Chemical mapping of a 177-nucleotide RNA with 2A3. The RNA was probed in 150 mM KOAc, 10 mM MgCl2 and 150 mM bicine (pH 8.5) at 24 C. Values cover nucleotides 27 to 126. Source: RMDB library OK1LIB, as collected in RNAgym.
RNA sequence: GGGAACGACUCGAGUAGAGUCGAAAACACCAAUGAUCAGCUACCGACAUUUGGAAAUAUAAUGGCCACUGUAGGAUCCACGGCCUUGACUGUGUCUCAUUUCUCAACCUCCUUUAGAGAUCCUAUCAAGACCAUGCACGUUCGCGUGCAUGGUCUUAAAAGAAACAACAACAACAAC
Reactivity to 2A3 in 0.01 (KOAc 150mM, MgCl2 10mM, bicine 150mM(pH8.5), 24C), signal-to-noise 2, nucleotides 027 to 126: c100a030c000c040a020a040u140g020a270u090c030a000g010c000u020a000c050c070g150a080c020a080u080u100u050g120g040a130a170a000u270a000u080a060a260u170g110g010c050c000a040c100u070g150u070a050g120g000a040u000c020c040a050c150g020g000c000c000u040u060g040a040c000u010g010u060g020u080c000u000c010a020u000u040u010c040u000c000a000a060c020c020u040c020c000u110u170u020a140g000a000g000a030u000c000c000u060a070u100c070